[RMDB]
RNA sequence: GGGAACGACUCGAGUAGAGUCGAAAAUGUACUCAACAAAUUGAUGGAACAAGAACCAGGUGACUCGACAUUCUUAGACUGGGGUUCUGAUCCAUAUUCGUGUAACCUGCCUUACUCCCAGAGUAUCCAAUACACUCCUCUUCGGAGGAGUGUAUUGAAAAGAAACAACAACAACAAC
Reactivity to DMS in 0.01 (KOAc 150mM, MgCl2 10mM, bicine 150mM(pH8.5), 24C), signal-to-noise 7, nucleotides 027 to 126: u010g010u000a060c020u000c010a110a120c150a060a080a110u010u010g020a050u010g000g010a050a100c080a080a040g000a110a100c030c000a230g000g000u000g010a070c070u010c100g010a100c130a100u010u010c100u000u000a090g010a060c040u000g010g010g010g020u010u010c020u010g010a120u000c020c020a020u000a060u000u000c090g000u000g010u000a050a060c050c030u000g010c050c030u010u000a080c120u000c010c010c020a090g000a090g000u000a060u010c160
Reactivity to 2A3 in 0.01 (KOAc 150mM, MgCl2 10mM, bicine 150mM(pH8.5), 24C), signal-to-noise 4, nucleotides 027 to 126: u080g010u010a020c000u010c030a060a020c050a060a200a120u220u270g050a050u080g010g030a050a040c050a130a060g010a030a020c010c010a010g060g020u020g090a070c050u020c090g050a030c050a210u230u080c060u070u080a060g020a140c020u040g190g000g110g000u030u040c020u020g020a030u010c000c010a020u050a080u070u090c060g000u020g020u080a040a070c020c020u040g040c020c010u040u060a050c020u030c030c000c000a010g000a010g040u050a050u050c050
Structure probing data (DMS and 2A3) for a 177-nucleotide construct. For DMS, 7,385 sequencing reads were counted. Conditions: 150 mM KOAc, 10 mM MgCl2 and 150 mM bicine (pH 8.5), 24 C.